[RMDB]
Notes: This 207-nucleotide RNA was probed chemically with 2A3. For 2A3 the reverse transcriptase was SuperScript II with manganese. The data come from the RNA Mapping Database (RMDB), library RNAMAK. The reactions ran in a buffer of 150 mM KOAc, 10 mM MgCl2 and 150 mM bicine (pH 8.5), at 24 C.
RNA sequence: GGGAACGACUCGAGUAGAGUCGAAAAAAAAAACGCUGGGCAUUGAAGUCGACUAGAUACGCAACAGCCGACUGAAGCGCGCACGGUCGGACAUGCGUAUCAAGUCGACCCAAUGCCUGUGCUGAAGCGCGCACGGCAACCGAAAGGUGCGAAAAAAGUGUAACCUAUACUUCGGUAUAGGUUACACAAAAGAAACAACAACAACAAC
Reactivity to 2A3 in 0.01 (KOAc 150mM, MgCl2 10mM, bicine 150mM(pH8.5), 24C), signal-to-noise 1, nucleotides 027 to 156: a000a000a040a000a000a000c010g010c010u040g000g010g020c000a010u000u000g040a060a000g020u000c000g000a000c000u020a010g000a010u000a010c000g010c030a300a160c080a240g050c000c000g000a010c020u020g020a190a050g000c000g010c000g000c000a000c010g000g020u000c000g000g030a010c110a220u300g000c000g000u000a000u000c000a000a000g000u000c000g000a000c000c020c000a010a000u000g000c010c000u000g000u020g000c000u020g030a060a020g010c000g000c000g020c010a010c020g020g000c030a010a000c000c010g040a030a080a040g040g000u020g000c000g140a030a030a000a000a030a030